[RMDB]
RNA sequence: GGGAACGACUCGAGUAGAGUCGAAAAUUGCUGAGGUAUUAAAAAUCCUAAAAAAUGCAGGAUUAGAUUCGAUUCCCGGAGGAGGAUUCGAUAUUCUGGUUGAUGAAAUACGUCACAUACUCGCUCCAGACCAAUAGAAUUUCGAUUCUAUUGGUCUAAAAGAAACAACAACAACAAC
Reactivity to DMS in 0.01 (KOAc 150mM, MgCl2 10mM, bicine 150mM(pH8.5), 24C), signal-to-noise 4, nucleotides 027 to 126: u010u010g010c140u000g020a060g010g010u000a020u000u000a020a120a110a110a050u000c010c040u030a010a030a080a110a100a090u010g010c160a020g000g010a040u010u000a060g000a130u010u000c020g010a090u000u000c010c010c050g020g020a090g000g010a120g020g000a040u000u010c020g010a060u010a040u000u000c020u000g010g020u010u000g000a080u000g010a070a040a040u010a050c050g000u000c030a030c050a060u000a090c040u000c030g020c120u000c050c090
Reactivity to 2A3 in 0.01 (KOAc 150mM, MgCl2 10mM, bicine 150mM(pH8.5), 24C), signal-to-noise 2, nucleotides 027 to 126: u060u020g000c020u020g000a050g050g000u020a040u040u090a130a120a030a010a060u070c010c000u120a220a190a060a040a000a010u130g060c040a010g020g020a010u010u060a050g070a120u050u030c010g020a000u000u030c000c040c010g010g060a090g040g080a060g020g000a020u110u030c010g020a010u020a040u190u020c020u040g170g040u160u150g060a080u080g030a030a030a040u080a040c060g080u010c010a020c010a020u070a030c020u030c040g120c010u070c040c010

Conditions: 150 mM KOAc, 10 mM MgCl2 and 150 mM bicine (pH 8.5), 24 C. Structure probing data (DMS and 2A3) for a 177-nucleotide construct. For DMS, 3,627 sequencing reads were counted. Reactivities are rounded to 0.1 and cut off at 0 and 3. For 2A3 the reverse transcriptase was SuperScript II with manganese. As a SHAPE reagent, 2A3 marks flexible, mostly unpaired nucleotides at the ribose 2'-OH.